[RMDB]
RNA sequence: GGGAACGACUCGAGUAGAGUCGAAAAAUUCCUCAUUUGAGGCAUCGUAAUUGUUUGGUCUGCCCUUGACAAGUGGUGUUGAAGGUUGGGUCUUGCGCAAUGGGAACCUGUGAACCAUGUCAGGUCCUUAACAGGUCUUCUUCGGAAGACCUGUUAAAAAAGAAACAACAACAACAAC
Reactivity to 2A3 in 0.01 (KOAc 150mM, MgCl2 10mM, bicine 150mM(pH8.5), 24C), signal-to-noise 2, nucleotides 027 to 126: a000u000u010c000c000u110c030a070u110u180u020g120a010g010g000c000a090u040c030g120u100a120a130u060u140g120u110u200u240g000g000u000c000u030g140c000c030c000u010u090g000a010c010a050a050g020u050g030g060u080g130u110u040g090a030a010g000g010u010u010g010g000g000u000c000u080u040g130c050g030c030a000a210u150g000g010g020a030a050c000c000u000g070u080g060a000a130c010c010a020u020g140u090c030a040g040g000u000c000c000
Reactivity to DMS in 0.01 (KOAc 150mM, MgCl2 10mM, bicine 150mM(pH8.5), 24C), signal-to-noise 3, nucleotides 027 to 126: a140u010u010c000c000u020c100a130u030u030u010g000a090g000g020c170a050u020c050g000u010a070a110u010u030g000u020u010u030g000g000u010c010u000g010c030c010c050u000u040g000a040c070a070a110g040u020g010g020u000g000u010u000g000a100a020g000g010u000u000g000g000g030u010c020u020u000g010c110g030c100a080a070u010g000g000g000a030a030c030c030u020g000u020g000a070a110c150c090a090u040g000u010c070a010g030g000u000c040c040
Chemical mapping of a 177-nucleotide RNA with 2A3 and DMS. The 2A3 profile rests on 717 reads. The data come from the RNA Mapping Database (RMDB), libraries RFM100 and RFMREP. For DMS the reverse transcriptase was MarathonRT.